Chemical mapping of a 177-nucleotide RNA with DMS and 2A3. It was measured as part of the RMDB library RFMREP. The 2A3 profile rests on 1,600 reads.
RNA sequence: GGGAACGACUCGAGUAGAGUCGAAAAGACCGUCGUGAGACAGGUUAGUUUUACCCUACUGAUGAGUUCGUUGUCUAAACAGUAAUCCAACCCAGUACGAGAGGAACCGUUGGUUCAGAUAAUUGGUCUAUUCCAUAUCGUUCGCGAUAUGGAAUAGAAAAGAAACAACAACAACAAC
Reactivity to DMS in 0.01 (KOAc 150mM, MgCl2 10mM, bicine 150mM(pH8.5), 24C), signal-to-noise 3, nucleotides 027 to 126: g010a030c000c010g030u000c010g000u000g020a240g000a000c030a070g050g010u000u000a050g020u000u000u000u000a020c010c020c000u000a020c030u000g040a150u000g000a020g000u000u010c010g000u000u000g000u000c000u010a060a090a120c190a110g020u000a090a050u020c010c030a020a020c010c000c050a070g030u000a130c040g010a240g030a250g000g000a050a050c130c300g000u000u000g020g000u010u000c130a110g000a140u000a030a180u000u000g030g030u020
Reactivity to 2A3 in 0.01 (KOAc 150mM, MgCl2 10mM, bicine 150mM(pH8.5), 24C), signal-to-noise 3, nucleotides 027 to 126: g030a000c010c010g000u000c000g000u090g070a090g020a060c140a300g020g000u010u000a030g020u040u010u010u030a020c000c040c000u000a010c010u040g300a300u090g010a020g040u210u080c000g010u050u060g300u130c060u030a060a140a040c040a070g050u140a070a010u040c000c000a020a000c000c000c000a000g000u000a010c010g020a000g010a040g170g030a000a000c020c000g020u040u060g050g020u060u040c020a010g010a200u130a110a120u210u120g070g030u040
Annotation: The reactions ran in a buffer of 150 mM KOAc, 10 mM MgCl2 and 150 mM bicine (pH 8.5), at 24 C.